[RMDB]
RNA sequence: GGGAACGACUCGAGUAGAGUCGAAAAAUACUUCUCAGGAUGGCGCGUUGCAGUCCAACAAGAUCCAGGGGCUGUACAGAAUUUUCCUAUACCUCGAGUCGGGUUUGGAAUCUAAGGUUGACUCGCUAAAACUUUACGUGGUUCGCCACGUAAAGAAGUUAGCAUACGAGUUCGCUCGUAUGCUAACAAAAGAAACAACAACAACAAC
Reactivity to 2A3 in 0.01 (KOAc 150mM, MgCl2 10mM, bicine 150mM(pH8.5), 24C), signal-to-noise 2, nucleotides 027 to 156: a000u080a050c010u040u040c010u010c020a020g100g040a070u050g030g040c020g000c040g140u120u080g000c020a000g000u000c020c010a060a080c070a120a150g050a120u070c070c050a030g000g000g000g020c020u010g050u060a020c000a010g140a160a050u060u020u000u030c000c000u100a080u090a100c000c020u020c040g010a000g010u020c000g020g000g000u030u040u040g030g010a050a030u000c060u110a160a060g100g020u080u110g070a020c000u000c010g000c040u080a110a100a020a070c000u000u000u000a010c000g000u000g000g010u000u020c050g090c030c000a000c000g000u000a000a000a000g000a030a010
Reactivity to DMS in 0.01 (KOAc 150mM, MgCl2 10mM, bicine 150mM(pH8.5), 24C), signal-to-noise 1, nucleotides 027 to 156: a070u000a020c040u010u010c010u060c030a260g020g010a050u010g000g020c070g060c120g060u010u000g000c050a080g020u000c020c120a140a250c080a060a200g020a080u000c050c000a060g060g020g030g030c000u000g070u000a150c050a200g010a110a030u000u000u000u000c010c020u000a110u010a030c020c000u010c000g010a000g060u000c010g010g030g050u000u000u000g020g000a070a090u000c050u000a100a070g020g030u000u010g060a050c020u010c020g030c060u000a080a050a100a140c000u000u000u020a000c000g030u010g020g040u020u000c250g020c010c000a020c010g020u010a010a010a050g010a020a070